[RMDB]
RNA sequence: GGGAACGACUCGAGUAGAGUCGAAAAGUGCAUAUGUUAAUGGAGUAGCAUGACACUAUGAAACACGUGUAAAUCAUGUGCUGUUUCUAUUACAGCAAAUGCAUCUACCUCUACAAGCACCAUUUACCUCCCAUUCUGUCUUCGGACAGAAUGGGAGAAAAGAAACAACAACAACAAC
Reactivity to 2A3 in 0.01 (KOAc 150mM, MgCl2 10mM, bicine 150mM(pH8.5), 24C), signal-to-noise 2, nucleotides 027 to 126: g020u000g000c010a010u080a050u130g050u060u130a090a050u120g010g030a010g030u040a000g020c050a000u030g010a040c010a010c000u070a060u200g230a120a120a020c130a020c110g040u010g020u090a110a130a100u110c050a030u090g050u020g030c000u010g040u000u190u000c070u130a110u070u060a030c040a010g000c000a010a060a040u020g000c010a020u000c000u080a080c010c010u010c030u060a050c040a060a000g090c030a040c070c000a060u070u050u130a080c020
Reactivity to DMS in 0.01 (KOAc 150mM, MgCl2 10mM, bicine 150mM(pH8.5), 24C), signal-to-noise 1, nucleotides 027 to 126: g030u000g010c040a030u000a110u000g000u000u010a030a040u000g000g020a060g000u000a080g010c110a000u000g040a040c030a020c040u020a090u010g050a110a090a130c120a050c220g010u020g010u000a070a110a120u000c090a090u010g000u000g040c030u000g040u010u000u000c170u010a110u000u000a050c040a060g010c040a030a050a010u000g000c030a030u000c080u010a090c010c010u000c120u000a070c080a020a020g000c120a100c030c050a070u000u000u020a140c200
Chemical mapping of a 177-nucleotide RNA with 2A3 and DMS.
The RNA was probed in 150 mM KOAc, 10 mM MgCl2 and 150 mM bicine (pH 8.5) at 24 C.
DMS adducts were read by reverse transcription with MarathonRT.
For DMS, 748 sequencing reads were counted.
High DMS reactivity at an A or C suggests that its Watson-Crick edge is free.
For 2A3, 1,997 sequencing reads were counted.